RNA sequence: GGGAACGACUCGAGUAGAGUCGAAAAACAGCGUAAGGCACAAGACUUCGAACAUUAUAGCAGUUAGUAGUUGCCUAAACCCAUUGCAAUAUAUGGGACAGUAGAGGUCGCAAGCCUAUACUGUGCGAAAAGUCGCAAGGUUUCGACCUUGCGACAACCCUUGUAUAAUAUUCGUAUUAUACAAGGGAAAAGAAACAACAACAACAAC
Reactivity to 2A3 in 0.01 (KOAc 150mM, MgCl2 10mM, bicine 150mM(pH8.5), 24C), signal-to-noise 5, nucleotides 027 to 156: a000c030a010g040c020g040u070a080a060g020g010c020a030c030a050a060g060a030c020u030u050c080g060a110a060c050a190u190u190a140u200a140g070c070a020g020u040u100a030g040u080a030g010u130u050g010c000c000u030a090a070a050c000c000c000a000u010u040g010c010a010a000u020a000u000a000u140g000g000g010a000c000a000g000u000a000g000a010g010g000u100c030g030c120a060a010g000c000c010u000a000u010a000c000u000g010u020g010c010g050a040a040a050a050g000u000c000g010c010a000a000g020g000u010u100u120c120g050a050c000c000u000u000g000c000g010a000c000a000a000
Reactivity to DMS in 0.01 (KOAc 150mM, MgCl2 10mM, bicine 150mM(pH8.5), 24C), signal-to-noise 2, nucleotides 027 to 156: a080c040a050g030c050g010u000a050a070g070g000c020a120c080a110a200g020a070c040u000u000c090g010a120a110c080a070u000u000a110u000a080g030c050a080g020u000u000a120g020u010a090g030u010u000g000c010c030u000a060a080a160c000c000c010a040u000u010g010c080a140a150u000a130u000a010u000g010g020g000a110c040a060g000u010a040g000a020g070g050u000c060g030c230a110a210g040c040c010u000a040u000a040c000u000g000u000g000c050g000a060a080a040a160g020u000c000g020c020a040a000g000g020u000u000u010c240g010a050c000c000u000u000g000c000g030a020c000a020a050